[RMDB]
RNA sequence: GGGAACGACUCGAGUAGAGUCGAAAAAUAAACCGGAAGCGACGCAGCAAGCCCGACCGGAAGGGCAACGGGAACCCGGAUCUCAACCCGGUUGGGACGCACCUGAGAGACGGGAAUGCGUAAAAAACUCUGUAAACUUGUUCGCAAGUUUACAGAGAAAAGAAACAACAACAACAAC
Reactivity to 2A3 in 0.01 (KOAc 150mM, MgCl2 10mM, bicine 150mM(pH8.5), 24C), signal-to-noise 1, nucleotides 027 to 126: a020u080a020a060a030c000c020g050g040a070a020g110c030g060a050c060g000c080a030g050c020a090a040g050c000c030c000g050a070c010c000g050g010a020a040g110g010g020c040a040a040c010g000g030g000a030a080c010c000c000g050g060a110u010c000u000c000a030a100c020c000c000g150g050u070u130g070g000g000a000c000g000c030a060c010c010u060g030a090g020a000g020a110c060g010g010g030a060a070u050g010c000g000u000a090a050a000a000a040a050
Reactivity to DMS in 0.01 (KOAc 150mM, MgCl2 10mM, bicine 150mM(pH8.5), 24C), signal-to-noise 2, nucleotides 027 to 126: a080u000a040a060a120c010c020g030g000a080a230g010c100g000a050c070g000c040a050g010c130a170a110g000c000c000c010g000a090c000c040g000g000a110a100g010g030g020c070a070a050c000g000g020g000a140a160c050c020c000g000g000a090u000c000u010c000a120a070c130c000c000g000g030u000u010g000g000g000a050c080g000c060a130c080c070u010g000a090g000a110g010a080c090g000g010g000a090a060u010g010c000g020u010a000a040a100a070a070a080
An RNA of 177 nucleotides, treated with 2A3 and DMS and read out base by base. DMS (dimethyl sulfate) methylates the pairing face of unpaired adenines and cytosines. Conditions: 150 mM KOAc, 10 mM MgCl2 and 150 mM bicine (pH 8.5), 24 C.